[RMDB]
RNA sequence: GGGAACGACUCGAGUAGAGUCGAAAAGCGGGUAACUUCGGUUACCCGCAAAGACGCGUCUCGUCGGGUCGCCGUCGCGUCGCGGCGCGUCGCGUCGCGAGAAAAGGACGAAGUUCGCUUCGUCCAAGAAAAUAAGUACCUUCGGGUACUUAUUUUCAAAAGAAACAACAACAACAAC
Reactivity to DMS in 0.01 (KOAc 150mM, MgCl2 10mM, bicine 150mM(pH8.5), 24C), signal-to-noise 4, nucleotides 027 to 126: g020c000g010g000g010u010a000a000c000u000u010c190g020g020u010u000a010c000c020c000g020c000a000a020a060g010a070c080g010c040g010u000c000u000c010g000u000c000g000g010g010u010c000g020c020c270g010u010c140g010c030g010u010c000g010c000g010g000c050g020c110g010u000c030g030c010g000u000c000g000c130g020a120g010a030a060a100a090g010g000a010c000g010a000a010g010u000u010c250g020c010u010u000c000g010u000c000c000a040a040
Reactivity to 2A3 in 0.01 (KOAc 150mM, MgCl2 10mM, bicine 150mM(pH8.5), 24C), signal-to-noise 3, nucleotides 027 to 126: g010c010g000g000g010u030a000a010c010u070u110c210g070g000u030u000a000c000c000c000g010c000a010a010a010g010a000c020g010c000g020u010c000u010c010g050u010c000g050g150g000u020c010g010c030c020g210u130c180g000c000g030u000c010g020c010g050g010c030g000c030g080u050c010g000c000g010u010c010g000c070g010a100g080a020a130a010a040g020g000a000c000g000a000a000g010u020u140c200g030c100u000u000c000g000u000c000c010a000a010